Background:
Source: RMDB library M2RFPK, as collected in RNAgym. The record gives the reactivity of an RNA of 207 nucleotides to 2A3. Values cover nucleotides 27 to 156. For 2A3, 1,241 sequencing reads were counted. 2A3 adducts were read by reverse transcription with SuperScript II with manganese.
[RMDB]
RNA sequence: GGGAACGACUCGAGUAGAGUCGAAAAGAAAGAAAGAAAUUAGCUCGCCAGUUAGCGAGGUCUGUCCCCACACGACAGAUAAUCGGGUGCAACUCCCGCUCCUUUUCCGAGGGUCAUCGGAACCAAAAAAACUCAGGCAACUUCGGUUGCCUGAGAACGUAUGCGUUGAGUUCGCUCAACGCAUACGAAAAGAAACAACAACAACAAC
Reactivity to 2A3 in 0.01 (KOAc 150mM, MgCl2 10mM, bicine 150mM(pH8.5), 24C), signal-to-noise 2, nucleotides 027 to 156: g070a020a060a040g050a010a090a010g100a040a190a040u180u110a090g020c000u000c000g000c060c060a170g140u130u170a020g010c000g020a010g010g000u000c000u010g000u000c020c020c080c000a060c010a010c060g010a000c000a020g020a010u100a060a090u110c020g000g000g000u000g010c030a010a000c010u000c010c000c000g000c000u040c010c000u060u170u050u000c010c010g000a040g000g000g060u090c030a040u010c020g030g020a000a010c080c040a000a090a100a070a030a040a040c000u000c000a000g000g020c000a000a010c000u040u070c120g090g010u000u000g000c000c000u000g000a000g000a000a010